[RMDB]
RNA sequence: GGGAACGACUCGAGUAGAGUCGAAAAGCUGCGCAUUACUGGCCGGCAAAGGCCUGGCAUUUAUGGGCAAAGUGCCGAACGUCACCGCGCACUAUUACGCGUUUUAUGCCUGUGCGGGCCUGGACGAUUACGACGAUUUACCCGGCAACUGGAUAACAGCACUUCAAUGAUUCGUCAUUGAAGUGCUAAAAGAAACAACAACAACAAC
Reactivity to 2A3 in 0.01 (KOAc 150mM, MgCl2 10mM, bicine 150mM(pH8.5), 24C), signal-to-noise 2, nucleotides 027 to 156: g040c050u080g020c030g020c040a010u040u090a210c070u060g020g020c000c000g000g000c000a180a040a030g050g000c000c000u070g090g000c020a030u050u100u150a140u200g020g040g020c090a160a070a020g000u020g020c010c000g050a110a060c080g100u080c020a020c050c070g030c000g010c050a000c070u050a090u190u150a030c070g020c000g120u120u120u000u050a080u130g000c020c000u000g040u020g020c000g000g020g000c020c010u030g040g030a020c050g030a000u090u150a070c140g010a010c020g000a050u090u010u100a100c000c000c000g010g000c030a040a010c070u050g000g010a040u080a130a090c030
Reactivity to DMS in 0.01 (KOAc 150mM, MgCl2 10mM, bicine 150mM(pH8.5), 24C), signal-to-noise 1, nucleotides 027 to 156: g020c040u010g030c030g000c050a140u000u000a080c090u010g020g000c000c000g000g040c050a070a100a070g020g020c030c000u010g020g020c000a090u000u000u000a050u010g050g000g030c020a050a040a130g010u000g050c010c060g010a090a140c110g000u000c050a140c190c010g030c090g070c010a020c020u000a150u000u000a030c030g010c020g000u010u010u000u000a110u010g010c090c030u000g020u010g030c000g020g000g050c020c030u010g000g010a070c050g000a190u000u010a180c060g000a060c060g010a100u000u000u000a180c000c000c000g000g000c020a100a040c090u020g000g030a130u010a040a090c110